[RMDB]
RNA sequence: GGGAACGACUCGAGUAGAGUCGAAAACGCUACUCAUCCUUUCCGCCUCAAAUUAACGUUCGUAAAAUCAGCAAAAAACGAGGAUUUUUCGUUCAUAUACCUAACAAGAAAGCCGAUAGUGCGCCGCACUUACCUUCUUCUUCGGAAGAAGGUAAGUAAAAGAAACAACAACAACAAC
Reactivity to DMS in 0.01 (KOAc 150mM, MgCl2 10mM, bicine 150mM(pH8.5), 24C), signal-to-noise 6, nucleotides 027 to 126: c060g020c020u000a030c020u000c040a080u010c040c020u000u010u000c030c030g000c040c050u000c070a050a080a070u010u020a090a130c190g010u010u000c030g020u000a020a030a050a040u010c030a040g010c050a020a060a060a060a080a070c170g000a050g010g010a040u000u010u000u000u000c010g000u000u000c030a060u010a070u020a090c070c030u010a050a060c130a090a070g000a050a060a090g020c050c030g010a060u020a050g020u000g010c020g020c060c020g010c120
Reactivity to 2A3 in 0.01 (KOAc 150mM, MgCl2 10mM, bicine 150mM(pH8.5), 24C), signal-to-noise 9, nucleotides 027 to 126: c030g010c020u030a020c000u020c030a070u050c010c010u030u060u010c020c020g040c020c010u080c050a070a090a080u130u110a090a030c080g010u020u020c010g020u030a010a010a020a040u030c020a020g130c100a090a080a070a080a040a070c130g040a090g110g000a040u020u000u000u000u030c010g000u000u010c030a010u080a010u040a200c020c040u080a120a090c050a130a030g110a180a050a010g030c020c020g030a030u040a040g060u040g030c020g000c010c010g010c010